[RMDB]
Structure probing data (2A3) for a 207-nucleotide construct.
Source: RMDB library M2RFPK, as collected in RNAgym.
The 2A3 profile rests on 766 reads.

RNA sequence: GGGAACGACUCGAGUAGAGUCGAAAAGAACACGUCUCGGGACGACGCUAAACUCGCCCUGGUCGGGAUGGGUUUAACGACCCCUCGGGUUUCCUAGUUCCUAAAACUAGAUGGUGGAGUCAUAUAAAAAACUUCUACACGUUCGCGUGUAGAAGAAGACAGCUUUUAGGUUCGCCUAAAAGCUGUCAAAAGAAACAACAACAACAAC
Reactivity to 2A3 in 0.01 (KOAc 150mM, MgCl2 10mM, bicine 150mM(pH8.5), 24C), signal-to-noise 1, nucleotides 027 to 156: g080a120a050c010a000c060g000u000c000u000c000g000g080g000a070c300g000a000c050g050c180u040a000a050a030c000u010c000g000c020c010c030u020g000g090u110c050g050g000g000a090u060g060g040g020u030u010u070a040a020c040g020a020c000c020c000c000u000c010g020g000g000u010u040u010c000c000u000a040g000u020u030c010c040u080a110a100a010a030c020u030a000g040a130u040g020g040u050g080g070a110g040u090c070a090u170a000u250a250a120a040a000a000a060c000u000u020c000u000a000c000a000c000g040u040u060c170g040c010g060u000g000u000a000g000a000a000g000a000a000